[RMDB]
RNA sequence: GGGAACGACUCGAGUAGAGUCGAAAAUUCUCCUCUGAUCUUCGUGAUCAGAGUUUUGAGUCGUCAGACUACGAGCAGUUUCUCUUAGUCGUUGCAUCGGGUGCUGUUGCCUUAAGCAUGUGUAUAUGAGAUUAGGUAUGUUCGCAUACCUAAUCUCAAAAGAAACAACAACAACAAC
Reactivity to DMS in 0.01 (KOAc 150mM, MgCl2 10mM, bicine 150mM(pH8.5), 24C), signal-to-noise 3, nucleotides 027 to 126: u000u010c000u000c030c000u000c010u000g000a010u000c000u000u010c220g020u010g010a010u000c000a000g000a010g000u000u000u010u010g010a040g010u000c020g020u000c170a130g000a050c020u000a030c090g010a030g020c300a140g000u000u000u000c020u000c030u010u000a050g010u000c020g020u000u000g000c030a060u000c090g000g010g040u000g010c060u000g010u000u000g010c020c030u010u010a090a150g010c050a040u000g000u010g010u010a100u000a100u000

Structure probing data (DMS) for a 177-nucleotide construct. The reactions ran in a buffer of 150 mM KOAc, 10 mM MgCl2 and 150 mM bicine (pH 8.5), at 24 C. The data come from the RNA Mapping Database (RMDB), library RFMREP. The DMS profile rests on 3,007 reads.